Structure probing data (2A3) for a 207-nucleotide construct. Conditions: 150 mM KOAc, 10 mM MgCl2 and 150 mM bicine (pH 8.5), 24 C. Reactivities are given for positions 27 through 156. Source: RMDB library RNAMAK, as collected in RNAgym.
[RMDB]
RNA sequence: GGGAACGACUCGAGUAGAGUCGAAAACGCUGGGCCAAUCCGUGAUCGUAGCAAGUCCGUUGAAGCUCUGAAGCGCGCACGGAGCUUCAACGGAUGAUGACCUACGGGAGUCACGGUUUGGCCUGUGCUGAAGCGCGCACGGCAACCGAAAGGUGCGGAGACUAGAACGGUUCGCCGUUCUAGUCUCAAAAGAAACAACAACAACAAC
Reactivity to 2A3 in 0.01 (KOAc 150mM, MgCl2 10mM, bicine 150mM(pH8.5), 24C), signal-to-noise 1, nucleotides 027 to 156: c110g030c020u120g000g020g010c040c000a000a000u000c000c010g000u000g010a140u300c000g010u020a000g030c050a300a300g030u000c000c000g090u010u000g020a000a000g000c010u000c000u000g050a100a020g000c000g010c010g000c040a030c000g000g000a000g000c000u000u020c000a010a000c000g000g020a000u000g000a050u000g000a000c000c000u000a000c000g010g080g030a090g110u030c000a000c020g000g000u000u000u000g000g000c000c000u000g000u020g000c010u140g040a000a040g000c000g040c000g010c020a000c000g100g000c120a200a200c000c030g010a190a000a010g000g050u030g050c040g060